[RMDB]
RNA sequence: GGGAACGACUCGAGUAGAGUCGAAAAAAAGAGUUCUUGCUUAGCUAUAUCAAUAGGACUGCUAUAUUUUUUUUUAAGCAUUGUAGACCCAUUAAUUGCCAACUGUUGCGCUCUAACGGCGACCAACCUUGUGGCCUCAAAGGUGGUUAAAACGUUGCUUGAGUAAUUACUUCGGUAAUUACUCAAGAAAAGAAACAACAACAACAAC
Reactivity to 2A3 in 0.01 (KOAc 150mM, MgCl2 10mM, bicine 150mM(pH8.5), 24C), signal-to-noise 1, nucleotides 027 to 156: a000a000a000g110a040g030u080u010c030u030u130g090c050u020u020a030g010c090u120a090u060a090u240c060a170a160u060a100g050g090a030c030u010g040c040u060a050u020a130u110u170u030u070u000u010u020u020u050a070a000g000c040a020u070u140g050u050a030g030a100c000c040c040a040u180u180a080a050u220u100g030c000c000a040a000c060u050g050u110u030g040c080g020c050u000c020u150a100a000c030g040g010c010g010a010c010c010a040a060c000c000u010u040g050u070g130g010c030c040u050c020a060a060a010g040g000u050g040g040u040u040a010a150a000a000c070g080u060u060g010
Background: The record gives the reactivity of an RNA of 207 nucleotides to 2A3. It was measured as part of the RMDB library OK3TST.